[RMDB]
RNA sequence: GGGAACGACUCGAGUAGAGUCGAAAAACGGAGAGAAUCAGUUUCUGAGAGACCCCAAGCGGUCAGUCAUGGGUGACGGCUUCCAGCCCCAUGAGCUGCUGGACAGCACAAAGAAGACACAGGCUCCCAGGUACUACGGAUUCGUCCGUAGUACCUGAAAAGAAACAACAACAACAAC
Reactivity to DMS in 0.01 (KOAc 150mM, MgCl2 10mM, bicine 150mM(pH8.5), 24C), signal-to-noise 2, nucleotides 027 to 126: a160c110g010g010a040g000a090g000a110a090u000c060a070g000u000u000u000c100u010g030a160g030a170g000a070c060c030c000c060a120a110g000c060g020g000u010c080a080g000u010c020a000u000g020g020g020u010g030a060c080g010g000c150u010u020c070c120a080g010c090c030c000c010a040u010g020a060g010c020u000g000c030u000g020g010a120c080a040g010c000a080c130a080a080a110g000a080a070g000a050c060a070c100a090g000g010c040u000c020c090
Reactivity to 2A3 in 0.01 (KOAc 150mM, MgCl2 10mM, bicine 150mM(pH8.5), 24C), signal-to-noise 1, nucleotides 027 to 126: a010c060g030g010a080g010a000g020a090a170u110c050a090g050u010u110u010c050u030g080a060g010a060g030a160c010c050c030c000a000a070g040c080g080g030u000c030a040g060u000c020a020u070g030g030g020u140g080a090c050g080g000c080u110u000c000c040a010g030c000c000c010c020a020u020g050a060g040c040u040g020c000u050g080g090a050c060a000g030c050a030c060a050a120a030g070a040a010g020a020c010a020c040a140g100g000c000u000c050c030